[RMDB]
RNA sequence: GGGAACGACUCGAGUAGAGUCGAAAACUGGAUGCUGCCGAAUGGCUGCGGCACAGGAAAAGCAUCGUCUUCCUGAUGAUAGGGGAAGGCCAGCAGCGCGGCUUCGUGGAAAGCGAAGUGAAGCGUAGUAUCGCUCCAGUUUCGACUGGAGCGAUACAAAAGAAACAACAACAACAAC
Reactivity to DMS in 0.01 (KOAc 150mM, MgCl2 10mM, bicine 150mM(pH8.5), 24C), signal-to-noise 2, nucleotides 027 to 126: c080u000g020g020a050u010g000c020u000g040c020c050g010a220a110u020g010g000c100u000g010c050g020g050c040a160c080a150g010g040a060a090a150a040g020c030a050u000c210g000u000c030u000u000c000c000u000g000a200u000g010a090u010a150g020g000g020g100a040a010g000g000c010c090a060g000c090a150g000c000g020c060g000g000c010u000u000c010g000u000g000g000a100a130a200g010c000g000a000a030g010u000g000a040a130g000c010g020u000a120
Reactivity to 2A3 in 0.01 (KOAc 150mM, MgCl2 10mM, bicine 150mM(pH8.5), 24C), signal-to-noise 1, nucleotides 027 to 126: c010u000g110g020a050u070g000c010u010g000c000c000g160a260a190u220g100g030c040u070g000c010g040g000c030a020c020a050g000g070a050a140a030a010g000c010a050u070c060g020u030c000u030u040c000c000u070g070a130u160g050a040u140a190g080g010g030g000a010a000g000g000c040c000a040g040c000a040g010c020g010c000g020g090c010u000u000c030g010u100g030g150a300a130a000g030c020g010a000a000g020u020g100a120a030g000c000g000u050a070

Structure probing data (DMS and 2A3) for a 177-nucleotide construct. Reactivities are given for positions 27 through 126. It was measured as part of the RMDB library OK2TST. The RNA was probed in 150 mM KOAc, 10 mM MgCl2 and 150 mM bicine (pH 8.5) at 24 C.